[RMDB]
RNA sequence: GGGAACGACUCGAGUAGAGUCGAAAAGCUAUAUCACGGUCUUUGCAACAAACGCUUGCUAGUGUAUGCAAUGGUGUCAUAGUUUGGAGGCUAAUUAUAGGAUGGAUCCCUGGAUAUGGCAGUCUCAGUCCACCGGAUAUUUCGAUAUCCGGUGGACAAAAGAAACAACAACAACAAC
Reactivity to 2A3 in 0.01 (KOAc 150mM, MgCl2 10mM, bicine 150mM(pH8.5), 24C), signal-to-noise 1, nucleotides 027 to 126: g030c020u010a000u010a010u040c030a030c100g010g060u010c030u060u100u160g060c020a030a030c030a080a210a010c020g000c080u030u080g000c010u010a040g130u150g060u210a100u110g020c000a040a100u040g150g000u030g070u070c060a080u040a140g040u000u030u080g000g020a040g000g000c010u010a000a070u270u140a080u190a120g090g000a030u150g200g020a070u080c010c000c020u010g090g010a030u040a010u040g000g000c000a020g010u000c000u000c000a000
Reactivity to DMS in 0.01 (KOAc 150mM, MgCl2 10mM, bicine 150mM(pH8.5), 24C), signal-to-noise 1, nucleotides 027 to 126: g000c010u000a020u000a040u000c000a130c170g040g030u010c010u010u000u000g000c050a040a080c090a170a130a060c090g010c040u010u000g010c030u020a140g020u030g000u010a070u020g000c020a060a080u010g030g010u000g010u000c070a050u000a080g010u020u000u000g070g020a090g010g000c000u000a070a100u000u000a080u000a050g020g010a130u010g010g010a090u020c100c000c030u000g010g000a010u000a000u000g000g000c020a060g000u010c010u010c000a180